Chemical mapping of a 177-nucleotide RNA with DMS and 2A3. Conditions: 150 mM KOAc, 10 mM MgCl2 and 150 mM bicine (pH 8.5), 24 C. The data come from the RNA Mapping Database (RMDB), library TTRDES. For 2A3, 6,672 sequencing reads were counted. For DMS, 2,917 sequencing reads were counted.
[RMDB]
RNA sequence: GGGAACGACUCGAGUAGAGUCGAAAAGAUAUGGACUCCUUGUGGACAUGCCUACACCUCGGAAACGAGGUGAAGGCAACAGCCAUGGGAGUCCUAAGUCAAAGUGAUUGGCUUCGGCCAAUCACAACUCCCGUUAUAUCUUCGGAUAUAACGGGAGAAAAGAAACAACAACAACAAC
Reactivity to DMS in 0.01 (KOAc 150mM, MgCl2 10mM, bicine 150mM(pH8.5), 24C), signal-to-noise 2, nucleotides 027 to 126: g000a000u000a080u010g000g000a000c000u000c000c000u000u020g090u000g010g000a040c070a140u010g040c020c000u010a120c000a020c000c000u000c000g000g010a020a010a020c010g010a030g020g020u000g000a050a010g010g000c010a000a020c180a160g000c000c000a030u000g000g010g000a000g020u000c000c000u000a000a040g000u000c000a120a140a190g010u000g010a020u000u000g020g010c000u000u010c250g010g040c000c000a000a000u000c000a000c000a080a100
Reactivity to 2A3 in 0.01 (KOAc 150mM, MgCl2 10mM, bicine 150mM(pH8.5), 24C), signal-to-noise 3, nucleotides 027 to 126: g000a020u020a010u060g000g000a000c010u010c030c060u300u300g060u010g070g060a060c130a300u300g000c000c000u030a030c020a000c000c010u000c000g000g020a010a020a010c000g000a010g000g000u000g000a010a000g000g030c000a010a010c130a020g000c000c000a010u020g010g000g000a000g000u000c000c000u010a000a000g000u010c010a050a120a050g010u010g010a010u010u000g040g000c030u110u130c300g060g000c010c020a000a010u000c010a000c000a000a010